Structure probing data (2A3) for a 207-nucleotide construct. 2A3 adducts were read by reverse transcription with SuperScript II with manganese.
[RMDB]
RNA sequence: GGGAACGACUCGAGUAGAGUCGAAAACUUAUCCGGUUUUAACGCUGUUUUAUUGGCGCAAAGGUUUACGGAUAAACAACUAAUAAUUAAACCUUUUGUGUGCGAAACGUGGUUGUUUCACGUACUCACUGCCCCCAGGGAUUCGUCCCUGGGGGAACAACAGUCAAGACUUCGGUCUUGACUGUUGAAAAGAAACAACAACAACAAC
Reactivity to 2A3 in 0.01 (KOAc 150mM, MgCl2 10mM, bicine 150mM(pH8.5), 24C), signal-to-noise 3, nucleotides 027 to 156: c020u010u000a000u000c000c000g000g050u020u000u000u020a080a040c010g000c010u030g140u170u160u110u180a130u200u280g040g010c010g000c020a020a000a040g010g000u000u010u000a000c000g010g000a020u040a060a070a010c050a040a020c040u190a080a100u150a210a040u200u150a020a000a000c010c000u010u040u100u110g040u020g000u010g020c090g040a130a120a020c040g000u050g010g040u060u020g020u000u060u040c010a010c010g030u040a040c020u040c040a060c050u070g020c020c010c000c000c000a000g000g000g000a020u040u030c110g030u000c040c010c010u010g000g000g000g000g000a000a000